An RNA of 177 nucleotides, treated with 2A3 and DMS and read out base by base. The 2A3 profile rests on 3,477 reads. The DMS profile rests on 3,134 reads.
RNA sequence: GGGAACGACUCGAGUAGAGUCGAAAACAGUGAGACUUCGGUCUCACUGAAAUGACUAUGCACCAUGAGGAGGACGAAGAUGCGGAGGACGACGAGGAACAAAAACAGCAAGGUUCGCCUUGCUGAACUUGGAUUAAGACUUCGGUCUUAAUCCAAGAAAAGAAACAACAACAACAAC
Reactivity to 2A3 in 0.01 (KOAc 150mM, MgCl2 10mM, bicine 150mM(pH8.5), 24C), signal-to-noise 3, nucleotides 027 to 126: c010a010g000u010g000a020g000a010c020u060u110c260g140g000u010c000u000c010a000c000u000g000a000a000a020u100g010a000c040u080a060u220g030c030a050c030c020a090u130g040a010g080g030a010g020g010a020c060g030a020a070g020a060u090g050c040g020g030a000g030g000a000c040g000a000c020g020a040g040g040a060a030c050a040a090a000a020a010c000a000g010c000a000a010g030g010u030u040c180g080c010c010u000u000g010c010u000g000a010a010
Reactivity to DMS in 0.01 (KOAc 150mM, MgCl2 10mM, bicine 150mM(pH8.5), 24C), signal-to-noise 4, nucleotides 027 to 126: c020a010g020u000g000a010g000a030c000u000u010c170g020g000u000c000u000c000a010c000u010g010a010a080a090u010g000a110c060u000a070u000g010c070a090c040c030a050u010g020a050g020g010a040g000g010a080c100g000a090a050g020a040u000g010c050g010g010a060g000g010a070c080g010a080c120g010a090g000g020a060a050c130a050a070a060a090a170c010a020g010c000a010a010g000g010u000u020c240g010c000c000u000u000g000c000u000g000a000a050